RNA sequence: GGGAACGACUCGAGUAGAGUCGAAAAGUACUUUCCUUGCAGGGAUGUUGGGAGGCUUAUGUGAGAUGAUGAUGUAAACAUAAUGCAUGGAACAUAGUAAGUUUUCAGUGAACACACACUUUAGAUGAUGAGAGGAUCUUGGAUGGAUACAGCUGUAGAUCCUCCCGUCAUUCGUGACGGGAGGAUCAAAAGAAACAACAACAACAAC
Reactivity to 2A3 in 0.01 (KOAc 150mM, MgCl2 10mM, bicine 150mM(pH8.5), 24C), signal-to-noise 1, nucleotides 027 to 156: g040u050a080c010u030u020u070c020c010u050u040g010c040a060g010g040g040a050u090g060u050u060g070g030g020a010g030g000c030u060u070a080u140g040u060g010a100g000a100u100g020a040u080g010a000u080g040u130a090a000a000c030a040u150a060a070u150g070c000a030u090g030g070a060a000c000a040u060a110g020u040a140a110g020u020u000u070u070c070a060g000u010g190a060a000c000a000c000a020c020a000c180u150u080u000a080g050a180u080g040a020u060g000a000g000a040g040g010a010u010c010u040u000g000g000a040u040g000g000a030u030a170c010a030g000c040u000g010u100a030
Source: RMDB library OK3TST, as collected in RNAgym. An RNA of 207 nucleotides, treated with 2A3 and read out base by base.